[RMDB]
RNA sequence: GGGAACGACUCGAGUAGAGUCGAAAACACAAAGCGCCGGACACAGCACGCCGCAAACGCGCUGAGGACGCCGACGCGCUUACUUAUGUCACGCAACACUCCCUCAGCCCUGUCCAGUGUCGGACUGAUCAUUGCUUCCUUUCGAGGAAGCAAUGAUAAAAGAAACAACAACAACAAC
Reactivity to 2A3 in 0.01 (KOAc 150mM, MgCl2 10mM, bicine 150mM(pH8.5), 24C), signal-to-noise 1, nucleotides 027 to 126: c070a000c010a050a120a020g020c020g050c000c040g020g000a020c010a000c010a010g030c020a020c040g080c050c060g200c110a060a040a010c010g020c000g000c010u010g010a120g020g070a030c040g000c040c000g040a060c000g010c010g010c000u050u070a080c020u150u170a070u180g040u060c040a010c070g000c020a050a080c040a020c070u030c000c000c010u030c020a030g030c000c000c010u030g040u000c010c000a010g040u020g100u210c030g030g010a020c040u040g020
Reactivity to DMS in 0.01 (KOAc 150mM, MgCl2 10mM, bicine 150mM(pH8.5), 24C), signal-to-noise 2, nucleotides 027 to 126: c070a080c110a070a070a110g000c020g020c040c020g020g010a150c090a130c020a040g020c020a020c030g000c020c020g040c270a050a160a220c030g010c030g010c000u000g000a150g020g010a090c240g020c020c020g010a080c100g010c010g010c060u000u000a040c150u020u000a050u010g010u010c040a070c100g010c040a030a040c100a090c060u000c030c000c010u010c060a100g000c010c010c010u000g020u010c030c020a060g000u000g020u000c160g000g010a050c050u000g000